[RMDB]
RNA sequence: GGGAACGACUCGAGUAGAGUCGAAAAAUCUUGUCAAAGGUUUUGCUGCCUUGUUAAUAGCUAUCCAUUAUUUAUUGACUAACUGUUAAAACCUAAAGAACCUGUGCUCCUCCACAUUUAGUAUCCUCCCAUAACCCCUGUUCGCAGGGGUUAUGGGAAAAGAAACAACAACAACAAC
Reactivity to 2A3 in 0.01 (KOAc 150mM, MgCl2 10mM, bicine 150mM(pH8.5), 24C), signal-to-noise 1, nucleotides 027 to 126: a000u000c010u000u000g000u090c030a080a060a030g090g000u000u020u010u010g010c000u100g000c070c070u000u290g080u030u100a090a090u060a000g300c180u030a150u120c000c060a060u100u080a000u140u140u000a060u000u000g000a090c100u080a030a030c000u000g050u190u300a000a020a020a000c010c010u010a040a110a110g030a000a000c000c000u080g030u110g150c000u040c000c000u000c000c000a090c000a000u000u040u080a040g050u000a030u110c040c050u000